[RMDB]
RNA sequence: GGGAACGACUCGAGUAGAGUCGAAAAUAUCCAGCCACGAGGCCGUACGCAGUUUGCUGAUUAACCCGGCGUUAUCUUCUUCGCAAAUUGCACAGUCUUUUAUCGAUGUGUGCGGAGAUGAGCUGGAGUGGAGCGACAAUUUCGAUUGUCGCUCCACAAAAGAAACAACAACAACAAC
Reactivity to 2A3 in 0.01 (KOAc 150mM, MgCl2 10mM, bicine 150mM(pH8.5), 24C), signal-to-noise 1, nucleotides 027 to 126: u150a010u030c020c010a020g020c010c020a100c130g110a010g220g000c000c010g110u100a010c030g000c030a040g020u130u200u050g200c030u050g000a100u060u220a050a050c050c020c010g160g000c050g070u060u030a040u090c050u120u000c000u060u070c040g000c010a000a020a300u060u160g040c020a000c020a060g140u070c000u040u280u010u170a270u300c090g030a020u050g050u000g020u030g060c010g000g000a000g060a110u060g030a060g000c000u000g000g000a000
Reactivity to DMS in 0.01 (KOAc 150mM, MgCl2 10mM, bicine 150mM(pH8.5), 24C), signal-to-noise 1, nucleotides 027 to 126: u000a140u000c010c000a020g020c000c050a090c160g030a240g010g000c010c000g000u000a080c130g000c010a090g000u000u020u010g010c020u010g000a090u000u000a070a160c160c070c050g000g050c080g000u000u030a060u000c100u020u000c040u000u010c050g000c020a120a060a100u000u010g020c010a030c100a020g010u000c010u050u000u000u000a060u000c110g010a040u010g020u010g020u010g000c020g040g000a140g010a060u000g000a070g000c000u000g000g000a140

An RNA of 177 nucleotides, treated with 2A3 and DMS and read out base by base. High DMS reactivity at an A or C suggests that its Watson-Crick edge is free. For 2A3 the reverse transcriptase was SuperScript II with manganese. For DMS the reverse transcriptase was MarathonRT. The RNA was probed in 150 mM KOAc, 10 mM MgCl2 and 150 mM bicine (pH 8.5) at 24 C.